[RMDB]
Chemical mapping of a 177-nucleotide RNA with DMS and 2A3. For DMS the reverse transcriptase was MarathonRT.
RNA sequence: GGGAACGACUCGAGUAGAGUCGAAAAGUUGGCGCCGACGUUUGCCAAGCCGAGAUUGAAGCCCGCCGCGCUCGGGGGGCCGGCAGCGGCUGCCGCGGCGCUGGUCAGCCGCUCCGAUAGGCCCGCCCCCUUAAGUGGGGUUCGCCCCACUUAAGGGAAAAGAAACAACAACAACAAC
Reactivity to DMS in 0.01 (KOAc 150mM, MgCl2 10mM, bicine 150mM(pH8.5), 24C), signal-to-noise 3, nucleotides 027 to 126: g010u010u020g010g020c040g030c040c010g010a090c100g000u010u020u020g000c020c010a090a170g010c000c020g010a070g000a150u020u020g010a160a200g010c030c020c030g000c020c030g000c090g010c050u010c060g000g010g030g010g000g040c030c010g020g020c150a030g000c020g000g020c010u000g010c000c010g000c030g000g010c070g060c060u010g000g000u060c020a010g000c000c000g000c010u000c020c020g020a110u020a110g020g000c010c010c010g000c040c060
Reactivity to 2A3 in 0.01 (KOAc 150mM, MgCl2 10mM, bicine 150mM(pH8.5), 24C), signal-to-noise 2, nucleotides 027 to 126: g090u060u040g020g000c010g000c040c010g040a070c080g040u040u110u110g030c020c000a020a010g030c000c030g050a080g020a090u100u190g100a100a010g020c030c000c000g030c020c010g050c010g000c020u080c020g000g000g010g000g000g000c020c000g030g000c060a000g010c000g000g000c000u010g000c000c010g020c070g060g000c060g000c060u020g000g020u170c020a010g000c000c010g000c000u020c020c010g090a110u090a110g030g010c000c000c000g110c000c010
Source: RMDB library OK1LIB, as collected in RNAgym. The reactions ran in a buffer of 150 mM KOAc, 10 mM MgCl2 and 150 mM bicine (pH 8.5), at 24 C. High 2A3 reactivity points to a flexible backbone, as in loops and unpaired stretches. The 2A3 profile rests on 3,248 reads.